The record gives the reactivity of an RNA of 177 nucleotides to DMS and 2A3.

RNA sequence: GGGAACGACUCGAGUAGAGUCGAAAAUCGGCGAUCCAGCCCUGGGCCUCCACGUCUUUCCAGGGGAUGUCGUAGCGCUUGGGUCCCACGAGGGCGAAGAGGUGGCGUUCCUUGCCGUCUUCGCGCACAGCGGAGACGUAUUCGUACGUCUCCGCUGAAAAGAAACAACAACAACAAC
Reactivity to DMS in 0.01 (KOAc 150mM, MgCl2 10mM, bicine 150mM(pH8.5), 24C), signal-to-noise 6, nucleotides 027 to 126: u000c050g020g020c300g000a030u000c100c040a100g000c010c020c030u010g000g000g000c030c030u000c010c030a060c060g010u000c130u010u000u010c090c110a130g010g000g000g010a040u000g020u000c030g010u000a070g020c270g010c030u010u010g040g000g000u000c000c010c020a140c110g010a080g010g010g020c010g010a030a060g000a100g000g010u000g010g000c040g010u000u000c030c020u000u010g020c050c000g010u000c010u000u000c010g010c020g030c170a200
Reactivity to 2A3 in 0.01 (KOAc 150mM, MgCl2 10mM, bicine 150mM(pH8.5), 24C), signal-to-noise 3, nucleotides 027 to 126: u090c020g030g000c070g020a010u010c000c010a000g020c000c000c000u020g010g010g020c020c010u040c040c030a090c060g110u040c110u120u250u100c060c050a040g000g000g020g030a010u050g010u020c110g110u080a020g040c030g000c030u060u170g040g000g020u000c000c020c010a060c020g030a120g030g130g000c010g010a010a010g000a010g040g200u160g050g000c030g010u060u040c020c000u020u090g000c000c000g030u020c000u010u010c000g000c010g000c010a030

Source: RMDB library OK2TST, as collected in RNAgym. The DMS profile rests on 7,052 reads.